This 177-nucleotide RNA was probed chemically with 2A3 and DMS. For DMS the reverse transcriptase was MarathonRT. Reactivities are given for positions 27 through 126. The RNA was probed in 150 mM KOAc, 10 mM MgCl2 and 150 mM bicine (pH 8.5) at 24 C.
[RMDB]
RNA sequence: GGGAACGACUCGAGUAGAGUCGAAAAGGAGCUUGAUUCGUCAAGCUCCAAAAGUUACAGUCCCGAUUCCUAGGGUAAACAAGAAGCUAUGCACCGAGGCAAAAAGGAAUGGAUUCGUCCAUUCCAAUCUAAGUUGUCUGUUCGCAGACAACUUAGAAAAAGAAACAACAACAACAAC
Reactivity to 2A3 in 0.01 (KOAc 150mM, MgCl2 10mM, bicine 150mM(pH8.5), 24C), signal-to-noise 1, nucleotides 027 to 126: g000g010a000g000c000u010u000g000a000u060u040c060g010u010c060a000a000g010c010u000c000c000a000a000a000a000g020u020u090a130c080a060g060u040c030c000c010g000a070u080u060c010c030u040a070g000g000g080u100a090a130a030c060a020a040g140a030a010g060c060u100a010u160g010c030a020c040c050g050a050g000g040c040a010a040a030a080a030g000g010a010a020u010g000g000a000u030u080c250g010u040c050c000a000u020u010c000c010a000a000
Reactivity to DMS in 0.01 (KOAc 150mM, MgCl2 10mM, bicine 150mM(pH8.5), 24C), signal-to-noise 3, nucleotides 027 to 126: g000g020a020g020c000u000u000g000a050u000u030c200g040u000c010a000a000g010c000u000c010c000a020a020a090a090g000u000u000a100c190a200g010u010c000c000c020g010a170u000u000c040c010u000a130g000g000g000u010a040a070a080c090a040a060g020a110a130g000c040u000a030u000g000c060a090c050c060g000a100g030g010c200a010a030a070a080a070g000g000a000a010u000g010g000a040u000u000c240g000u000c000c000a020u000u000c000c010a070a040